[RMDB]
RNA sequence: GGGAACGACUCGAGUAGAGUCGAAAACACACAAGGUUCGCCUUGUGUGCAAGAAUAGACGAAUACUACCGUAGAAGUAUUCAGCUCACAUAACUACGGAAAUGGCGUUCUGCUUCGGCAGAACGAAGCUUGGCAAGAUAUUCGUAUCUUGCCAAGCAAAAGAAACAACAACAACAAC
Reactivity to DMS in 0.01 (KOAc 150mM, MgCl2 10mM, bicine 150mM(pH8.5), 24C), signal-to-noise 2, nucleotides 027 to 126: c010a000c000a000c000a030a000g000g010u000u000c230g050c010c010u000u000g020u010g010u010g030c080a060a040g000a120a110u010a060g000a130c130g040a020a050u000a020c030u000a120c020c010g010u000a010g030a170a040g030u000a000u000u000c010a070g020c030u000c060a050c200a050u000a130a110c000u000a000c030g030g000a090a080a130u010g010g020c020g030u000u000c000u000g000c010u000u010c140g010g000c000a000g000a000a000c000g010a060a020
Reactivity to 2A3 in 0.01 (KOAc 150mM, MgCl2 10mM, bicine 150mM(pH8.5), 24C), signal-to-noise 4, nucleotides 027 to 126: c000a010c000a000c000a020a010g020g030u040u050c130g140c040c000u000u000g000u000g000u010g000c010a030a030g090a080a080u130a160g110a060c050g000a020a000u020a010c020u070a250c000c000g020u000a010g020a180a000g010u000a000u010u010c010a020g040c020u060c040a100c000a140u230a240a080c010u020a000c000g010g110a010a070a060u200g180g060c010g000u000u010c010u010g000c000u000u070c190g100g000c000a000g000a010a000c000g000a010a010

This 177-nucleotide RNA was probed chemically with DMS and 2A3. For DMS the reverse transcriptase was MarathonRT.